RNA sequence: GGGAACGACUCGAGUAGAGUCGAAAAGGACAAUUCGUUGUCCAAGCCUUCCUAAGUCGACAACAGCGUCGUUCAGGCAUCGAUCUGGGUCGGAAACGACCCAGGGAGCCUGGACGACGACAUGUCGAUAUGGACCGAGACGGGGUUCGCCCCGUAAGUUUUGGUAUAUCUUCGGAUAUACCAAAACAAAAGAAACAACAACAACAAC
Reactivity to DMS in 0.01 (KOAc 150mM, MgCl2 10mM, bicine 150mM(pH8.5), 24C), signal-to-noise 2, nucleotides 027 to 156: g030g020a020c010a020a100u000u010c210g020u000u010g020u000c000c020a080a110g010c060c040u000u010c000c020u000a090a280g020u000c000g020a040c020a040a120c060a230g020c030g020u000c000g010u000u000c020a030g040g000c020a280u000c180g000a090u010c020u000g000g010g010u000c000g030g000a140a110a300c000g020a000c010c000c000a010g000g000g040a050g040c000c000u010g000g010a060c010g010a000c010g000a000c040a170u000g010u000c000g000a040u000a280u000g000g000a050c030c060g010a170g000a110c050g000g020g000g010u000u020c110g020c000c000c000c000g030u010a000a300
Reactivity to 2A3 in 0.01 (KOAc 150mM, MgCl2 10mM, bicine 150mM(pH8.5), 24C), signal-to-noise 5, nucleotides 027 to 156: g000g000a000c010a020a020u080u080c270g050u150u050g000u010c000c010a020a000g060c000c000u030u070c010c000u060a120a080g020u010c000g010a010c010a100a030c040a160g040c000g000u000c010g000u000u000c000a000g010g000c050a180u300c060g070a040u000c010u000g000g000g000u000c000g000g040a040a080a080c010g000a000c000c000c000a000g000g010g000a000g000c000c000u000g000g000a000c000g000a000c000g000a000c000a000u000g010u000c000g000a000u010a030u050g010g010a030c100c090g150a100g030a080c000g000g020g010g010u060u100c170g160c000c000c000c000g000u020a110a060